An RNA of 207 nucleotides, treated with 2A3 and read out base by base. The 2A3 profile rests on 861 reads. Conditions: 150 mM KOAc, 10 mM MgCl2 and 150 mM bicine (pH 8.5), 24 C. It was measured as part of the RMDB library M2RFPK. Reactivities are given for positions 27 through 156.
RNA sequence: GGGAACGACUCGAGUAGAGUCGAAAAGUUGAGAGCGUUUAACUUAAGUCUUUUUUAUUAGCUUAAAAAAACUAUAUACAAGUGGUGGUAGUCCGACACUCUAAGGGGACGCCUUUAGAAGAAGAGGGAAAGGCACUAAGCUUCGGCUUAGUGCCAACUGCAAUUUAAAGUUCGCUUUAAAUUGCAGAAAAGAAACAACAACAACAAC
Reactivity to 2A3 in 0.01 (KOAc 150mM, MgCl2 10mM, bicine 150mM(pH8.5), 24C), signal-to-noise 2, nucleotides 027 to 156: g070u080u060g040a030g000a020g030c020g030u040u060u220a090a030c030u010u040a080a020g060u170c080u020u240u020u050u040u120a150u200u150a110g010c010u050u040a100a010a010a000a040a010a010c160u200a180u060a040u100a220c070a130a030g010u030g060g020u030g040g010u050a070g030u040c030c010g030a040c010a000c040u070c040u010a010a010g030g000g000g040a010c020g120c000c000u070u060u070a100g000a150a010g020a040a000g030a080g050g020g060a070a110a070g010g000c010a000c010u000a000a000g000c000u010u090c290g070g000c000u020u000a000g000u000g000c000c000a000a000